[RMDB]
RNA sequence: GGGAACGACUCGAGUAGAGUCGAAAAGAUUCCAGGAUCUCAGGUACAGGGUUCAACACAGAUUUGAGACACACGUCGUUUACAUGCACGUAUUCCACUCCACGACGGAUAACUGAACUGUAGUAAGGUCCUUGUACUUCUUGUUCUGGUGACGAUGGCUACGGGAGUAUUUCGAUACUCCCGUAGCAAAAGAAACAACAACAACAAC
Reactivity to DMS in 0.01 (KOAc 150mM, MgCl2 10mM, bicine 150mM(pH8.5), 24C), signal-to-noise 1, nucleotides 027 to 156: g000a190u020u000c010c050a010g030g010a020u010c080u010c020a100g020g000u000a030c040a080g000g020g040u010u000c060a000a080c040a090c060a080g020a160u010u000u000g010a120g020a100c080a110c230a060c060g010u010c050g000u000u010u000a150c100a140u050g020c090a120c130g000u000a190u010u000c000c030a060c090u000c030c200a070c000g000a010c020g000g020a180u010a040a130c040u030g000a030a130c000u000g000u000a190g020u000a140a130g020g010u000c020c020u020u010g040u010a030c020u000u000c020u000u000g010u000u020c020u010g010g010u010g030a100c070g000a150u000g010
Reactivity to 2A3 in 0.01 (KOAc 150mM, MgCl2 10mM, bicine 150mM(pH8.5), 24C), signal-to-noise 2, nucleotides 027 to 156: g040a110u200u000c010c010a000g000g000a040u060c030u070c110a010g000g000u000a020c000a000g010g000g020u000u060c030a100a000c000a000c000a010g130a080u020u070u140g180a040g040a020c040a000c010a000c070g000u020c030g010u060u070u120a050c150a090u180g160c130a020c150g030u120a140u080u040c140c070a100c050u120c060c000a000c000g050a030c020g010g000a000u030a150a060c000u030g020a010a000c010u000g000u020a050g060u050a300a080g050g020u030c000c000u000u000g000u000a010c000u030u050c080u040u040g010u030u010c000u000g000g000u050g000a010c060g070a090u010g140
This 207-nucleotide RNA was probed chemically with DMS and 2A3.
Source: RMDB library OK3TST, as collected in RNAgym.
Reactivities are given for positions 27 through 156.
As a SHAPE reagent, 2A3 marks flexible, mostly unpaired nucleotides at the ribose 2'-OH.
2A3 adducts were read by reverse transcription with SuperScript II with manganese.
For 2A3, 963 sequencing reads were counted.